[RMDB]
RNA sequence: GGGAACGACUCGAGUAGAGUCGAAAAGCUGCUUACGAGAAACAAGGGAUGCUGCGCACGCUGAUUAAAGUCACGUUCGGUUAUCCUGCGAUUUUUGACGAGGUUCGGCAGGAAUGCCAAAUCAACAAUCGGAGUUAUUCUUCGGAAUAACUCCGAUAAAAGAAACAACAACAACAAC
Reactivity to DMS in 0.01 (KOAc 150mM, MgCl2 10mM, bicine 150mM(pH8.5), 24C), signal-to-noise 3, nucleotides 027 to 126: g010c010u010g000c050u000u030a100c080g000a160g000a050a060a080c130a080a300g000g000g000a070u010g000c070u000g000c300g000c160a040c050g020c180u030g010a050u030u020a050a080a110g000u000c020a020c020g000u000u010c050g000g010u000u020a050u000c000c000u000g000c300g110a040u000u020u000u000u010g000a130c090g020a110g000g010u000u020c080g000g000c000a040g010g040a070a210u000g000c020c010a030a040a020u010c100a050a070c120a070
Reactivity to 2A3 in 0.01 (KOAc 150mM, MgCl2 10mM, bicine 150mM(pH8.5), 24C), signal-to-noise 3, nucleotides 027 to 126: g020c020u020g000c010u090u060a050c020g040a020g010a060a040a010c010a020a050g060g000g010a020u010g000c020u030g020c000g020c010a030c010g050c140u020g030a050u160u160a200a090a000g040u010c000a010c030g010u020u050c010g020g000u050u100a020u050c000c010u030g050c020g070a100u040u030u030u070u200g120a120c040g020a040g020g030u080u070c040g010g000c000a010g050g130a060a040u070g000c000c000a030a010a050u070c040a020a140c010a040